RNA sequence: GGGAACGACUCGAGUAGAGUCGAAAAAGCCAUGCAUACGUGCAUGGCAAUCCGAUGAGGAGCGAGCCCGGCCCUGAGCGAUGAUGAGAGCUACCACUACUGAGGAGCCGGAGCUACGGCUCCGGCAUCACCCCUUCCGAUUCGUCGGAAGGGGUGAAAAAGAAACAACAACAACAAC
Reactivity to 2A3 in 0.01 (KOAc 150mM, MgCl2 10mM, bicine 150mM(pH8.5), 24C), signal-to-noise 3, nucleotides 027 to 126: a000g010c000c000a000u000g000c000a010u020a080c270g150u050g000c000a020u020g000g010c000a000a040u000c010c010g050a060u150g050a040g050g030a020g040c020g020a010g020c000c000c000g040g000c030c000c000u000g040a040g020c050g060a070u070g010a040u070g110a110g030a000g170c050u100a100c030c010a020c030u140a030c030u060g060a060g000g040a040g090c010c000g000g000a020g000c010u000a030c050g070g000c010u030c000c000g000g040c010a030
Reactivity to DMS in 0.01 (KOAc 150mM, MgCl2 10mM, bicine 150mM(pH8.5), 24C), signal-to-noise 1, nucleotides 027 to 126: a040g050c040c000a000u000g000c010a010u020a130c150g000u030g010c020a010u010g000g010c000a000a000u000c030c020g000a040u050g000a190g000g030a070g010c050g000a090g000c040c000c030g010g000c020c080c010u000g000a040g010c100g020a040u070g010a080u010g000a110g040a160g000c100u000a090c010c040a090c020u020a100c090u070g000a110g010g010a190g040c000c000g030g000a030g030c010u000a060c030g020g050c000u000c000c000g020g020c090a050

Chemical mapping of a 177-nucleotide RNA with 2A3 and DMS. In probing experiments dimethyl sulfate is read out at A N1 and C N3, which are open when not base-paired. Values cover nucleotides 27 to 126. It was measured as part of the RMDB library RFM100. For 2A3, 1,676 sequencing reads were counted.